Chemical mapping of a 207-nucleotide RNA with 2A3.
RNA sequence: GGGAACGACUCGAGUAGAGUCGAAAAUAGGCAUACAGUUAUGCCAAAUACCUUACACAAAUAUCAGUAUACACACAUUAUCCAACAAAUGUGGAGACUUUGUAAGAUAUCAGUGUAAAAAUACAACGCUACAUUUGUAUAACAUUACCACAACAACCUAUGGGUGGUGUUUCGACACCACCCAUAGAAAAGAAACAACAACAACAAC
Reactivity to 2A3 in 0.01 (KOAc 150mM, MgCl2 10mM, bicine 150mM(pH8.5), 24C), signal-to-noise 3, nucleotides 027 to 156: u120a020g000g020c020a030u050a020c060a150g210u290u070a040u000g000c000c000a000a020a020u020a040c000c020u020u020a010c040a010c010a000a190a000u050a000u000c010a020g110u130a080u030a160c090a000c020a010c000a050u000u070a040u220c120c020a040a050c030a090a220a050u030g000u000g000g020a030g110a050c060u150u120u200g040u060a060a080g000a010u020a000u040c050a040g000u000g020u040a000a000a000a050a000u060a050c030a030a000c120g060c070u110a030c050a080u020u110u060g060u060a060u040a120a010c040a100u040u290a050c020c210a030c010a100a000c020a010a010c030
Record summary: Source: RMDB library OK3TST, as collected in RNAgym.